RNA sequence: GGGAACGACUCGAGUAGAGUCGAAAAAGCAUGAUCUGGUUGUCAGGCAUGAGCCAAAUCUAUCCAUGGUGUUGGUGGUACUGAAAUUACCGCGUUUUCGAGGUUUUUCGUCGUGUCAACUUGCGAACGUAUUGGCGUUAUUCGUAACGCCAAUACGAAAAGAAACAACAACAACAAC
Reactivity to DMS in 0.01 (KOAc 150mM, MgCl2 10mM, bicine 150mM(pH8.5), 24C), signal-to-noise 4, nucleotides 027 to 126: a060g000c090a060u010g000a050u000c040u000g020g020u030u020g000u010c040a050g000g020c140a060u010g000a080g000c020c030a020a080a030u000c040u000a110u010c030c060a100u010g010g010u000g000u000u010g000g020u000g020g000u020a030c090u020g000a030a040a060u030u010a050c030c020g020c060g010u000u010u010u000c010g010a080g010g010u000u010u010u010u000c040g020u000c060g020u030g010u020c070a040a060c070u010u010g010c060g010a050a120
Reactivity to 2A3 in 0.01 (KOAc 150mM, MgCl2 10mM, bicine 150mM(pH8.5), 24C), signal-to-noise 3, nucleotides 027 to 126: a000g110c050a010u090g040a110u070c020u040g060g060u090u080g180u140c040a010g000g010c010a040u100g080a010g020c010c010a030a030a030u030c030u050a100u030c020c060a070u170g030g010u080g040u120u040g010g030u030g020g020u050a060c020u120g060a020a080a040u090u070a030c010c000g070c040g010u010u000u070u130c050g030a040g050g000u030u010u020u020u060c060g040u010c020g000u020g030u090c010a020a030c030u050u130g020c050g060a060a030